[RMDB]
RNA sequence: GGGAACGACUCGAGUAGAGUCGAAAAAAUGAAGGUCGUCAAGCGGAAUGGUGAGCCAGAGGAGAUGCUCUUUGACAAGGUGACGAAGCGGAUUUCAAAAUUGAUUAAUGGUCUCAGUGUUCAGCCUGACAAGGUGGCUCAGAAGGUUUUCACAAGCUAUUAGAGUUUAAUUCGUUAAACUCUAAUAAAAAGAAACAACAACAACAAC
Reactivity to DMS in 0.01 (KOAc 150mM, MgCl2 10mM, bicine 150mM(pH8.5), 24C), signal-to-noise 4, nucleotides 027 to 156: a060a070u010g020a070a050g000g020u000c040g010u000c000a050a100g030c050g010g000a060a060u010g010g040u000g020a080g020c000c000a090g010a130g000g010a100g020a110u010g020c060u000c040u000u000u010g030a130c070a100a100g010g020u000g020a110c060g020a070a080g010c050g010g010a110u010u010u000c040a050a060a060a190u000u010g020a120u010u010a090a130u000g020g010u010c030u010c040a080g030u000g010u000u000c030a060g020c010c030u000g010a100c050a050a080g030g030u000g000g000c030u000c030a060g010a100a060g010g010u000u000u010u000c040a080c080a080a140g010c130
Reactivity to 2A3 in 0.01 (KOAc 150mM, MgCl2 10mM, bicine 150mM(pH8.5), 24C), signal-to-noise 5, nucleotides 027 to 156: a000a020u150g030a050a020g040g020u070c040g030u030c040a030a030g010c040g040g030a070a040u090g070g030u040g030a020g010c010c030a020g020a040g070g040a040g010a010u070g030c020u020c000u080u040u030g040a070c050a070a040g040g010u030g020a020c040g020a020a000g020c020g010g040a050u020u090u060c070a090a110a090a130u070u160g050a020u070u150a070a090u080g010g020u040c020u010c060a050g060u020g040u140u030c010a010g020c000c000u020g000a020c010a020a030g030g010u020g010g010c010u010c030a030g030a040a030g010g010u030u040u040u080c060a070c000a030a030g100c000